[RMDB]
RNA sequence: GGGAACGACUCGAGUAGAGUCGAAAAAAUUUGCCAGCAUCUUCUUUAACUGGGUCCACCUUCUUAUAGGACACUCUUGUACAAAACUCAGUCAUGACUAAAAGAUCGAUGAUCAAGGGCGUAGCCAAUUUAAAGUCGGAUUCGUCCGACUUUAAAUAAAAGAAACAACAACAACAAC
Reactivity to DMS in 0.01 (KOAc 150mM, MgCl2 10mM, bicine 150mM(pH8.5), 24C), signal-to-noise 3, nucleotides 027 to 126: a100a090u010u020u000g010c030c010a110g000c030a030u000c030u020u000c030u010u010u010a070a060c050u020g020g000g010u000c060c060a100c050c030u010u010c120u020u020a100u000a090g010g020a100c100a040c100u000c070u010u000g000u010a040c110a070a040a100a050c030u000c040a030g010u010c080a070u010g010a100c150u010a080a030a090a060g000a030u000c070g020a050u000g010a100u010c060a080a100g000g010g020c020g010u000a090g010c020c040a090
Reactivity to 2A3 in 0.01 (KOAc 150mM, MgCl2 10mM, bicine 150mM(pH8.5), 24C), signal-to-noise 1, nucleotides 027 to 126: a000a000u210u210u090g010c040c000a020g080c000a020u000c010u080u000c020u000u050u050a030a020c020u000g000g030g000u120c030c030a040c010c010u100u030c040u090u200a190u190a290g030g030a010c000a020c050u170c040u010u080g000u140a050c000a050a080a080a020c010u000c000a000g010u040c020a060u150g090a110c090u150a060a010a000a060g010a020u050c050g000a020u020g020a060u130c090a100a050g090g000g010c050g040u060a010g060c000c050a040